RNA sequence: GGGAACGACUCGAGUAGAGUCGAAAAGCAUUCAUCGGUGAUGACAACAUAAUACACGGCGUAGUGUCUGACAAGGAAAUGGCAGAAAGAUGCGCUACCUGGCUUAACAUGGAAGUGAAGAUCAUCGUCUUACGGACAUCUUCGGAUGUCCGUAAGAAAAAGAAACAACAACAACAAC
Reactivity to DMS in 0.01 (KOAc 150mM, MgCl2 10mM, bicine 150mM(pH8.5), 24C), signal-to-noise 2, nucleotides 027 to 126: g000c050a090u000u010c070a040u000c090g000g000u010g010a060u000g030a110c130a040a030c080a050u000a070a150u000a040c160a050c090g020g000c060g000u020a050g010u000g010u000c030u010g020a060c100a120a150g000g000a080a090a070u000g000g000c030a030g000a030a100a110g010a060u000g000c100g010c020u000a040c000c020u000g020g010c110u000u000a040a070c120a060u010g000g020a060a100g000u000g000a060a090g020a070u000c020a030u000c110g000
Reactivity to 2A3 in 0.01 (KOAc 150mM, MgCl2 10mM, bicine 150mM(pH8.5), 24C), signal-to-noise 2, nucleotides 027 to 126: g050c010a060u100u080c020a020u030c020g000g000u030g040a050u030g050a060c000a020a000c020a070u210a120a090u160a160c050a000c070g010g000c010g110u040a010g050u000g060u000c000u000g040a010c030a040a050g130g050a200a020a070u050g040g000c010a010g020a040a040a040g140a030u070g070c050g030c050u000a040c000c020u040g100g000c070u070u050a000a070c010a060u060g000g000a060a050g040u010g020a020a010g070a080u040c000a000u040c030g020
Record summary
Chemical mapping of a 177-nucleotide RNA with DMS and 2A3. DMS adducts were read by reverse transcription with MarathonRT. Values cover nucleotides 27 to 126. The RNA was probed in 150 mM KOAc, 10 mM MgCl2 and 150 mM bicine (pH 8.5) at 24 C.